[RMDB]
RNA sequence: GGGAACGACUCGAGUAGAGUCGAAAAGAAAGAAGGCGUAAUCGCCGUGUACGAGCUCCACGAUCCAUGAUUUUCUCGCCGGCCGGCAUGGAUCGGACGUACCUCGGAUUGCCGCCUUACAAAGUUAAUACUAGAUUAAAUAAACCGUGCCGGCAAAUCGUAAUAAUCCGUUCGCGGAUUAUUACGAAAAAGAAACAACAACAACAAC
Reactivity to 2A3 in 0.01 (KOAc 150mM, MgCl2 10mM, bicine 150mM(pH8.5), 24C), signal-to-noise 1, nucleotides 027 to 156: g070a010a110a020g110a000a000g000g000c000g000u020a050a000u080c130g000c110c030g010u000g000u000a010c000g000a070g040c140u090c210c130a070c050g000a000u030c000c000a000u000g050a080u080u090u130u030c150u060c060g000c010c000g000g010c000c000g000g030c000a000u000g000g000a000u000c000g000g000a000c010g000u000a000c000c120u110c050g000g030a010u000u110g020c020c030g000c000c000u030u000a020c030a010a050a000g060u100u150a120a120u060a240c070u040a050g090a200u200u090a040a170a180u090a030a060a040c010c030g030u110g000c000c000g000g030c000a000a000a000

Chemical mapping of a 207-nucleotide RNA with 2A3.
2A3 adducts were read by reverse transcription with SuperScript II with manganese.
The reactions ran in a buffer of 150 mM KOAc, 10 mM MgCl2 and 150 mM bicine (pH 8.5), at 24 C.
Reactivities are given for positions 27 through 156.
High 2A3 reactivity points to a flexible backbone, as in loops and unpaired stretches.